[RMDB]
Structure probing data (DMS) for a 177-nucleotide construct.
DMS adducts were read by reverse transcription with MarathonRT.
RNA sequence: GGGAACGACUCGAGUAGAGUCGAAAAGCACUGCGCGCACGGGCACGGCCGAGCGCGGAGCAGCCGUGCCCGCCGCCCGGGCCCGCCAAGGCGCACACGCUCCGGCCCCCCCCACCCGGCCCGGGCGGAUCAUGGUGCCAUUCGUGGCACCAUGAUCAAAAGAAACAACAACAACAAC
Reactivity to DMS in 0.01 (KOAc 150mM, MgCl2 10mM, bicine 150mM(pH8.5), 24C), signal-to-noise 1, nucleotides 027 to 126: g010c070a100c220u000g000c060g010c000g000c180a000c020g000g020g060c040a000c050g000g000c040c000g020a040g000c020g000c120g000g000a200g000c010a030g010c050c020g000u020g010c080c000c000g080c060c000g040c000c020c000g030g000g000c020c000c080g000c030c220a040a080g000g000c080g000c000a050c190a190c210g000c000u000c090c060g030g000c000c000c000c000c000c080c000c020a170c110c190c110g000g000c000c000c000g030g000g020c000g000

Overview:
The DMS profile rests on 1,593 reads. The reactions ran in a buffer of 150 mM KOAc, 10 mM MgCl2 and 150 mM bicine (pH 8.5), at 24 C. Source: RMDB library RFM100, as collected in RNAgym.